[RMDB]
RNA sequence: GGGAACGACUCGAGUAGAGUCGAAAAGAGAAGUACUUUGCAAACCUCUGAAACACUUUACAGAUAUUGUUAUCAGUCAAACUGGAAGUAGAAUGUCCACAGUGCAGUGUAACAAAUGUGACAUGUGAUAUUAAGGGUUCUUCGGAACCCUUAAUAUAAAAGAAACAACAACAACAAC
Reactivity to DMS in 0.01 (KOAc 150mM, MgCl2 10mM, bicine 150mM(pH8.5), 24C), signal-to-noise 5, nucleotides 027 to 126: g000a100g000a120a100g010u010a070c070u000u010u000g010c080a080a100a100c080c020u000c030u010g020a130a110a150c080a020c050u000u000u000a100c090a070g000a140u010a070u010u000g010u000u000a070u000c050a080g000u000c090a030a070a150c110u000g000g020a020a050g010u000a050g010a070a090u010g000u000c030c030a030c130a070g000u020g010c040a050g020u000g010u000a050a050c080a020a040a060u020g010u000g010a080c110a050u000g010u000g010
Reactivity to 2A3 in 0.01 (KOAc 150mM, MgCl2 10mM, bicine 150mM(pH8.5), 24C), signal-to-noise 2, nucleotides 027 to 126: g060a010g000a130a000g050u100a090c040u120u130u090g040c040a030a040a070c000c030u020c020u090g040a030a100a030c000a010c050u090u140u200a100c040a030g090a140u040a110u160u040g020u050u110a120u170c050a090g100u060c010a040a110a060c080u020g010g040a060a000g000u090a070g110a140a060u150g050u070c040c010a030c030a020g050u030g050c000a020g060u000g000u200a040a010c010a080a090a050u120g020u030g050a000c020a060u110g030u040g080